[RMDB]
The record gives the reactivity of an RNA of 177 nucleotides to 2A3 and DMS.
RNA sequence: GGGAACGACUCGAGUAGAGUCGAAAAGAUAUGGACGAGAACUACAAGUUGUGGAGCGUUGAAAUCGGAAACGAUGGAGCUCCCUCCCUUGCUCGUCCUAAGUCAAACCUAAGGUUCGCCUUAGGAAGACUGACGAAUAGUUCGCUAUUCGUCAGUCAAAAGAAACAACAACAACAAC
Reactivity to 2A3 in 0.01 (KOAc 150mM, MgCl2 10mM, bicine 150mM(pH8.5), 24C), signal-to-noise 2, nucleotides 027 to 126: g050a030u040a050u140g020g010a000c030g050a010g000a110a060c120u270a080c250a050a020g040u050u090g220u300g190g010a020g020c020g160u300u100g030a070a050a020u010c000g000g060a040a020a020c010g000a010u020g050g030a000g000c000u000c000c000c000u100c000c020c020u000u020g030c000u000c000g000u030c020c000u010a100a030g010u000c030a090a090a120c010c010u000a000a000g000g090u030u130c300g120c000c030u030u000a000g020g030a020a030
Reactivity to DMS in 0.01 (KOAc 150mM, MgCl2 10mM, bicine 150mM(pH8.5), 24C), signal-to-noise 1, nucleotides 027 to 126: g000a060u000a300u010g000g000a000c000g000a000g000a120a060c100u020a300c020a010a010g020u000u010g020u000g020g000a020g010c010g020u000u060g000a080a080a020u000c020g000g000a110a080a140c000g040a010u000g020g020a140g010c000u000c010c010c000u000c130c120c070u000u000g000c010u000c000g020u000c010c000u000a000a070g000u000c030a090a110a220c050c030u000a000a000g000g000u000u010c200g030c000c000u000u000a010g010g040a100a100

Source: RMDB library TTRDEL, as collected in RNAgym.
The reactions ran in a buffer of 150 mM KOAc, 10 mM MgCl2 and 150 mM bicine (pH 8.5), at 24 C.